[RMDB]
RNA sequence: GGGAACGACUCGAGUAGAGUCGAAAAGAUAUGGAUCCCAGUACGCGAGGAUCUAACGGGAUCGGAAACGAUCUUUAGGGAGCGUGUGGGAUCCUAAGUCAAAGUAAGCACGUUCGCGUGCUUACAAUCUCAUCACUACGUUCGCGUAGUGAUGAGAAAAAGAAACAACAACAACAAC
Reactivity to DMS in 0.01 (KOAc 150mM, MgCl2 10mM, bicine 150mM(pH8.5), 24C), signal-to-noise 2, nucleotides 027 to 126: g000a020u000a030u000g000g000a000u000c000c000c000a000g000u000a010c000g030c010g020a120g010g000a020u010c010u010a010a030c300g010g000g000a000u000c010g050g010a010a000a040c010g030a010u010c000u000u000u000a030g000g000g000a010g010c000g080u000g020u000g000g010g000a000u000c000c010u000a000a090g000u000c010a150a070a210g010u000a000a000g020c000a000c010g030u010u000c230g030c000g020u000g010c000u000u000a000c000a090a100